[RMDB]
RNA sequence: GGGAACGACUCGAGUAGAGUCGAAAAGAGCCGGGCUCGUCCCCAGACCUCGGAGCGUAGGAGCCGGGCUUAGGCUGGAUAGCCUGGGCUUGCUCCCCGCCGGCACAUUUCAGUCUAGACAGCCAUUUUCACCCAGGACAGCAGCGAGGCCAGAAAACCUGAGUAUCGUAUUCGUACGAUACUCAGGAAAAGAAACAACAACAACAAC
Reactivity to 2A3 in 0.01 (KOAc 150mM, MgCl2 10mM, bicine 150mM(pH8.5), 24C), signal-to-noise 1, nucleotides 027 to 156: g050a020g030c150c090g000g030g000c030u050c040g020u050c050c000c030c050a000g010a090c000c010u090c090g040g020a060g040c050g020u100a090g030g010a020g080c210c010g030g000g070c020u000u010a010g000g000c010u000g120g240a300u260a060g000c000c000u000g000g030g000c000u020u010g020c000u000c000c000c010c000g030c010c000g010g000c050a010c010a060u100u190u130c040a010g040u000c010u060a050g010a060c040a010g000c010c020a040u110u000u040u060c120a080c010c000c000a010g010g010a020c020a050g010c000a000g000c010g050a030g030g030c000c010a060g090a010a180a010a010

This 207-nucleotide RNA was probed chemically with 2A3. The 2A3 profile rests on 808 reads. Conditions: 150 mM KOAc, 10 mM MgCl2 and 150 mM bicine (pH 8.5), 24 C.